[RMDB]
RNA sequence: GGGAACGACUCGAGUAGAGUCGAAAAGUGAAUGGAGGGGGUUUUGACACUCCUACGGCUAUAUCACGGUUGGAGGAUACAGACAGAGAGAUAAUGUCAUUGAUCAGGCGUGCCUCGGAGGCCAUAACCACCAGACACCCAGUAAGGAGGGUGCCACCUAACUCAAGAAAUUCGUUUCUUGAGUUAGAAAAGAAACAACAACAACAAC
Reactivity to DMS in 0.01 (KOAc 150mM, MgCl2 10mM, bicine 150mM(pH8.5), 24C), signal-to-noise 2, nucleotides 027 to 156: g030u010g030a100a090u010g020g000a130g000g000g010g030g030u010u000u020u030g020a090c050a100c010u010c030c000u010a050c090g000g060c040u020a120u000a120u000c100a060c060g020g000u000u000g020g020a100g030g030a120u000a050c070a130g000a050c050a130g010a090g010a090g000a070u020a060a070u010g010u000c010a130u000u000g010a110u010c080a060g020g000c090g020u000g000c030c020u000c060g010g020a100g010g010c010c070a070u000a030a050c030c020a060c000c000a080g010a050c020a030c010c000c000a110g020u000a080a140g030g000a170g030g010g030u000g000c000c020a140c130
Reactivity to 2A3 in 0.01 (KOAc 150mM, MgCl2 10mM, bicine 150mM(pH8.5), 24C), signal-to-noise 3, nucleotides 027 to 156: g060u040g030a080a060u120g020g050a060g000g020g010g060g010u000u040u130u090g040a010c050a040c080u010c010c000u010a050c050g050g000c030u050a030u020a040u300c060a040c050g050g040u030u040g060g040a060g000g030a020u050a130c030a010g040a000c000a040g050a010g020a000g000a110u050a160a090u090g040u050c020a050u030u170g060a070u060c040a020g000g090c020g060u070g000c010c010u010c020g000g010a010g000g010c010c000a020u050a050a010c000c020a020c010c000a020g040a030c000a010c010c000c000a010g040u100a040a050g090g060a020g010g010g000u010g040c030c000a030c010